[RMDB]
RNA sequence: GGGAACGACUCGAGUAGAGUCGAAAAAGGCAGAGAAUUACUUUAAGCUCUUAAUCAUUGAAGUGUGCACUCCUGCUCUUCAAGAAACACCAAAAGGUAAAGUGAAUUCACAGCCAAACUUAUAAAAAGGAAUGAUUUCAUAAAAUAAAAAGCAGGAGCAUUAAAUAGUCUUCGGACUAUUUAAUGCAAAAGAAACAACAACAACAAC
Reactivity to 2A3 in 0.01 (KOAc 150mM, MgCl2 10mM, bicine 150mM(pH8.5), 24C), signal-to-noise 1, nucleotides 027 to 156: a000g090g000c070a050g030a010g060a160a000u090u030a000c000u170u070u070a120a070g070c010u000c070u300u160a090a060u000c040a180u000u000g000a020a000g010u030g040u040g070c030a020c090u010c010c000u000g000c030u000c000u050u000c000a020a040g030a050a120a030c080a040c030c100a040a050a000a080g100g000u050a080a100a030g030u070g160a010a010u040u020c010a000c050a060g010c000c000a030a160a030c050u170u180a130u180a210a070a020a000a000g060g080a080a050u060g070a040u050u040u020c080a030u220a170a230a270a080u210a070a020a070a030a000g050c080a000g000g000a010